[RMDB]
RNA sequence: GGGAACGACUCGAGUAGAGUCGAAAAAGCACGGUUUUUGAGGACGCAUUUUGUCCGUGCGGUAAUGCCUUCCUUUACACUUUCUCGCAUGGUGCGGGAGUGUGGAGAGGAAACAAAAGCUAGUCUCGAUAGGCGGUUAACUUCGGUUAACCGCCAAGUUGUAAACAGUGUUCGCACUGUUUACAACAAAAGAAACAACAACAACAAC
Reactivity to DMS in 0.01 (KOAc 150mM, MgCl2 10mM, bicine 150mM(pH8.5), 24C), signal-to-noise 2, nucleotides 027 to 156: a080g020c020a020c010g010g020u000u000u000u000u000g010a090g020g010a040c020g050c080a190u000u000u000u010g020u020c000c000g030u000g000c000g030g030u000a030a040u000g010c040c020u000u000c040c000u000u000u010a040c020a020c010u010u010u000c010u000c020g010c020a300u000g020g020u010g040c000g010g000g000a020g010u000g040u000g010g010a040g000a030g010g010a030a010a080c020a040a040a040a070g010c080u000a120g010u000c000u010c060g020a200u010a120g010g050c000g060g020u000u000a000a010c010u010u010c300g070g000u000u000a000a010c000c000g000c010c010a000a020
Reactivity to 2A3 in 0.01 (KOAc 150mM, MgCl2 10mM, bicine 150mM(pH8.5), 24C), signal-to-noise 8, nucleotides 027 to 156: a000g000c000a000c000g000g010u000u000u010u010u020g080a110g000g020a020c050g020c130a170u000u000u000u000g000u000c000c000g000u000g000c020g010g060u190a050a050u220g020c010c000u030u070c030c010u010u010u030a000c000a000c010u060u160u030c010u010c000g040c030a090u260g300g010u290g160c000g000g010g000a000g000u010g000u000g000g000a030g000a000g000g010a020a020a000c000a000a010a000a000g060c040u090a030g010u000c000u000c030g050a120u130a110g000g000c000g000g010u000u000a000a000c010u040u040c180g040g000u000u000a000a000c010c000g000c000c000a000a000
Conditions: 150 mM KOAc, 10 mM MgCl2 and 150 mM bicine (pH 8.5), 24 C. This 207-nucleotide RNA was probed chemically with DMS and 2A3.